[RMDB]
RNA sequence: GGGAACGACUCGAGUAGAGUCGAAAAAAGCUGUAACUGCAGGUUGGUCGCACACGCUUCUCUGUACUAAAGUGUUCAGUGUACAAACCCACUAACCAUUUUCCUCCCCUUUACAGCAAAAUAAAGGCACUUAAGGGCAAUUCGUUGCCCUUAAGUGAAAAGAAACAACAACAACAAC
Reactivity to DMS in 0.01 (KOAc 150mM, MgCl2 10mM, bicine 150mM(pH8.5), 24C), signal-to-noise 3, nucleotides 027 to 126: a060a060g010c000u010g010u000a020a060c190u000g010c140a040g020g010u010u010g010g010u010c110g020c040a070c060a050c070g030c060u000u000c060u000c040u000g010u000a090c100u000a090a040a060g000u000g010u000u010c120a040g020u010g000u000a200c060a090a070a170c100c030c020a060c020u010a030a050c050c010a150u000u000u000u010c010c010u000c020c010c010c000u010u000u000a010c030a000g000c050a060a040a050a060u020a070a040a150g010g010
Reactivity to 2A3 in 0.01 (KOAc 150mM, MgCl2 10mM, bicine 150mM(pH8.5), 24C), signal-to-noise 1, nucleotides 027 to 126: a000a000g000c020u010g030u020a000a050c080u080g050c120a040g000g000u060u060g040g070u030c000g000c110a040c020a000c070g020c050u180u000c080u030c020u040g110u080a110c050u210a100a120a060g040u080g000u070u090c080a020g010u040g000u060a060c080a120a100a060c000c000c020a020c040u030a000a040c020c000a040u090u030u270u110c040c000u010c000c010c010c010u000u040u010a010c080a030g020c000a000a050a000a000u190a040a100a040g060g020
Conditions: 150 mM KOAc, 10 mM MgCl2 and 150 mM bicine (pH 8.5), 24 C. The record gives the reactivity of an RNA of 177 nucleotides to DMS and 2A3. Values are in units of 0.01, from 0 to 300, in steps of 10. 2A3 adducts were read by reverse transcription with SuperScript II with manganese. For 2A3, 680 sequencing reads were counted. For DMS the reverse transcriptase was MarathonRT.